Chemical mapping of a 177-nucleotide RNA with 2A3 and DMS.
The reactions ran in a buffer of 150 mM KOAc, 10 mM MgCl2 and 150 mM bicine (pH 8.5), at 24 C.
For 2A3, 1,415 sequencing reads were counted.
2A3 adducts were read by reverse transcription with SuperScript II with manganese.
RNA sequence: GGGAACGACUCGAGUAGAGUCGAAAAACACCCUUAAACAGUGAGGGGUACAAUUGAUAGUUCCAUAGAAUGUUUCACAAGGGGGAUGAGCGAUCAAUGUGAAGAGAGAUGAAUUAAUCAGGUGAGACAUGUGCCAAGGAUUCGUCCUUGGCACAUGAAAAGAAACAACAACAACAAC
Reactivity to 2A3 in 0.01 (KOAc 150mM, MgCl2 10mM, bicine 150mM(pH8.5), 24C), signal-to-noise 2, nucleotides 027 to 126: a000c040a160c010c000c000u020u160a270a290a070c070a070g140u090g110a060g050g030g020g050u090a060c050a060a050u060u170g020a030u010a070g040u000u060c030c010a000u010a000g140a070a080u100g050u050u120u000c110a080c010a130a120g000g030g030g000g020a020u040g030a050g000c000g020a010u080c010a040a070u090g010u030g060a060a010g010a000g000a000g010a040u060g070a050a080u050u050a060a050u060c030a020g020g020u070g020a050g000a020
Reactivity to DMS in 0.01 (KOAc 150mM, MgCl2 10mM, bicine 150mM(pH8.5), 24C), signal-to-noise 3, nucleotides 027 to 126: a100c190a110c010c000c010u000u000a130a100a130c220a080g020u010g030a030g010g000g000g000u000a070c130a070a080u010u000g010a070u000a080g000u000u000c020c040a100u000a110g000a100a110u010g010u000u000u010c030a050c110a080a110g020g010g000g010g000a150u010g000a040g010c080g020a050u000c020a060a100u000g020u010g000a080a070g020a070g000a030g020a080u000g000a080a060u010u000a060a050u000c060a060g000g010u000g000a120g010a130